[RMDB]
RNA sequence: GGGAACGACUCGAGUAGAGUCGAAAACAAGGGACCAAAGAUUUUAGGCUAAAAUUCGGAUGACAACUUUGCCUUGUCAUUAUUAUCAUGGUAUGAACCAAUGGUCUGCGGUCUGCUUUUAGCCAGAUCGCAUUAGCCUAUUCGUAGGCUAAUGCGAAAAAGAAACAACAACAACAAC
Reactivity to DMS in 0.01 (KOAc 150mM, MgCl2 10mM, bicine 150mM(pH8.5), 24C), signal-to-noise 6, nucleotides 027 to 126: c170a070a080g010g000g010a020c030c020a040a300a100g000a030u010u000u010u000a160g010g000c030u000a050a060a070a030u010u000c140g000g000a010u000g000a000c010a020a030c080u000u010u010g010c180c190u010u000g000u000c010a020u000u010a050u010u010a090u020c110a130u000g010g020u000a130u010g010a070a090c020c010a030a120u010g000g000u000c040u000g010c300g000g000u000c000u000g010c090u000u000u000u000a130g000c060c030a090g000a080
Reactivity to 2A3 in 0.01 (KOAc 150mM, MgCl2 10mM, bicine 150mM(pH8.5), 24C), signal-to-noise 4, nucleotides 027 to 126: c030a010a050g040g010g020a010c010c010a000a050a000g010a020u030u060u090u190a060g030g000c040u090a040a020a080a200u200u120c090g090g020a000u020g010a010c000a010a000c040u200u210u260g040c010c000u000u000g020u010c000a000u010u120a060u060u100a070u080c080a050u110g150g000u120a080u180g050a020a020c010c000a020a050u040g020g000u000c000u010g000c000g000g010u000c000u010g170c010u020u050u010u100a030g050c000c000a030g010a110